[RMDB]
RNA sequence: GGGAACGACUCGAGUAGAGUCGAAAAAUUGGUGGCUAAUACCCGUUAUCCUUUUUUGGACCAGCUUGGAUAUAAAAUAUACCUGGUCUAAGGCGGAUAAACAAUGACCACCAGCGCAGAAGACCGGGCGAAAGCGGACUGGCUGCGCCCGUACAAACCUAUUGGUUGGAUUCGUCCAACCAAUAGGAAAAGAAACAACAACAACAAC
Reactivity to DMS in 0.01 (KOAc 150mM, MgCl2 10mM, bicine 150mM(pH8.5), 24C), signal-to-noise 1, nucleotides 027 to 156: a080u000u020g000g070u000g000g020c000u000a070a120u000a090c030c040c020g090u000u010a040u000c000c000u000u000u000u000u000u000g010g000a000c030c000a010g000c130u000u020g060g010a140u000a120u000a120a120a050a300u000a000u000a030c090c000u000g010g000u010c010u000a030a130g000g000c300g000g030a060u010a000a030a070c120a080a160u000g000a020c010c010a040c000c000a120g030c140g010c100a170g000a090a180g010a080c140c010g000g000g000c020g000a080a090a220g020c020g080g000a170c040u000g000g000c010u000g030c010g000c020c000c000g000u000a060c020a070a090a130
Reactivity to 2A3 in 0.01 (KOAc 150mM, MgCl2 10mM, bicine 150mM(pH8.5), 24C), signal-to-noise 2, nucleotides 027 to 156: a010u120u090g000g000u000g000g000c010u020a040a070u060a280c020c040c020g000u010u010a010u040c000c000u000u220u060u000u030u110g010g000a000c000c000a030g030c050u100u220g030g010a020u040a010u050a200a150a170a020u150a030u020a030c000c000u000g000g000u030c010u010a000a000g020g000c040g000g000a000u010a010a010a030c040a020a110u080g080a080c000c000a010c010c000a000g000c080g000c030a020g020a270a020g030a140c090c000g010g040g000c010g090a300a140a000g020c020g090g080a140c080u070g160g070c000u000g000c000g010c000c000c000g030u050a070c030a020a080a020